[RMDB]
RNA sequence: GGGAACGACUCGAGUAGAGUCGAAAAUAAAAAGCGCCAUUGAAGGUGGCGCAACUCACAUCGCGGUAGACGGUAACGGCGACGUUUUUGCGUUCAAGAUGCGCCCACGCCAUUGCUACCCUGAUUCGUAUGAUAGUGAUGGCUACCUGGGCGAGUGGCACAACGUUAAAUUCGUUUAACGUUGUGCAAAAGAAACAACAACAACAAC
Reactivity to 2A3 in 0.01 (KOAc 150mM, MgCl2 10mM, bicine 150mM(pH8.5), 24C), signal-to-noise 5, nucleotides 027 to 156: u170a000a060a020a020a010g010c010g000c010c020a030u050u210g160a120a030g140g000u010g000g000c000g000c000a000a060c000u030c000a060c020a100u060c050g010c030g050g050u110a050g030a100c030g020g090u080a100a040c020g030g010c010g030a040c030g030u000u010u000u060u160g070c060g020u130u120c050a080a030g040a110u070g040c000g000c020c010c010a020c100g000c010c000a000u010u020g000c010u020a020c000c020c030u080g080a210u230u180c110g040u180a090u160g060a100u050a010g020u010g000a000u000g000g000c010u060a090c040c030u010g000g000g020c020g000a010g010u100g080
Reactivity to DMS in 0.01 (KOAc 150mM, MgCl2 10mM, bicine 150mM(pH8.5), 24C), signal-to-noise 1, nucleotides 027 to 156: u040a030a000a040a140a160g010c000g000c010c020a070u000u030g010a170a300g020g010u010g010g020c040g000c030a000a020c060u030c090a040c050a080u010c010g010c030g000g010u030a070g040a300c030g000g020u000a050a040c070g000g040c010g010a030c010g040u000u000u000u000u000g010c030g010u010u000c050a030a140g010a120u020g010c030g010c000c030c000a050c130g020c020c000a050u000u010g010c000u000a010c000c000c080u080g000a140u010u010c170g030u000a160u000g000a030u020a040g000u020g010a030u030g010g010c010u000a070c100c020u000g020g040g010c010g000a030g010u020g000
The data come from the RNA Mapping Database (RMDB), library OK3TST. Chemical mapping of a 207-nucleotide RNA with 2A3 and DMS. For 2A3 the reverse transcriptase was SuperScript II with manganese. For DMS the reverse transcriptase was MarathonRT.